Chemical mapping of a 177-nucleotide RNA with DMS and 2A3. The data come from the RNA Mapping Database (RMDB), library OK1LIB. For DMS the reverse transcriptase was MarathonRT. Reactivities are given for positions 27 through 126. For 2A3, 6,112 sequencing reads were counted.
RNA sequence: GGGAACGACUCGAGUAGAGUCGAAAAACAACAUGACAACCCAGCUCUAGGGUACCAUUUCCGUUAUUCCUGACAUGUAAGGCAAAUUCAGACACCCAUCCAAGCUCGGAAAUUGCAAAGAUAUUGACCUAGCUAAUACGUUCGCGUAUUAGCUAGGAAAAGAAACAACAACAACAAC
Reactivity to DMS in 0.01 (KOAc 150mM, MgCl2 10mM, bicine 150mM(pH8.5), 24C), signal-to-noise 3, nucleotides 027 to 126: a100c140a110a130c190a060u070g000a090c140a060a130c000c000c000a120g000c040u010c070u000a090g010g000g000u000a060c100c020a060u010u020u000c010c040g010u010u000a110u000u000c070c010u010g010a040c110a090u020g020u030a060a040g000g000c060a010a050a150u000u010c050a010g000a070c080a090c020c030c010a040u020c020c050a080a090g020c050u000c040g020g000a030a040a060u030u040g000c070a070a130a120g000a020u020a120u010u010g010a300
Reactivity to 2A3 in 0.01 (KOAc 150mM, MgCl2 10mM, bicine 150mM(pH8.5), 24C), signal-to-noise 7, nucleotides 027 to 126: a000c100a040a030c080a150u180g070a020c020a050a050c060c010c000a030g010c030u050c030u100a100g020g020g020u070a070c020c010a060u020u030u050c040c010g050u040u060a050u070u070c010c010u040g030a020c010a060u110g040u140a060a030g050g010c040a020a070a100u130u090c010a010g030a040c020a060c040c010c000a010u020c030c020a070a010g010c040u060c070g070g010a050a070a070u090u090g020c030a040a120a030g100a080u080a100u120u100g030a030